[RMDB]
RNA sequence: GGGAACGACUCGAGUAGAGUCGAAAAGGGGUCACGCUAGGUCGUACGCAAGCAUCGAUCUAUACUGAAGCCUCCACGGUAUAGGGAGCUUGAAACGACCUUGGACCGUGACGGAGGCACCCAAAGAGGAUUUGCGACUUCGGUCGCAAAUCCUCAAGCGAACUAGGAAGUUCGCUUCCUAGUUCGCAAAAGAAACAACAACAACAAC
Reactivity to 2A3 in 0.01 (KOAc 150mM, MgCl2 10mM, bicine 150mM(pH8.5), 24C), signal-to-noise 1, nucleotides 027 to 156: g040g030g030g030u030c030a000c020g020c110u130a020g000g000u000c000g010u010a070c300g000c100a010a000g020c000a020u300c020g000a000u000c000u000a010u010a000c000u020g020a080a000g010c010c000u010c010c010a020c000g010g000u000a000u000a000g010g000g010a010g000c010u000u000g010a060a020a000c000g000a010c020c000u000u090g020g050a010c060c010g000u000g000a000c030g000g000a000g000g060c000a040c000c000c000a090a070a000g010a010g000g000a020u000u000u000g000c020g000a000c020u030u090c210g010g000u000c000g020c000a000a000a000u030c010c000u000c000a000a000
Conditions: 150 mM KOAc, 10 mM MgCl2 and 150 mM bicine (pH 8.5), 24 C. Structure probing data (2A3) for a 207-nucleotide construct. The data come from the RNA Mapping Database (RMDB), library RNAMAK.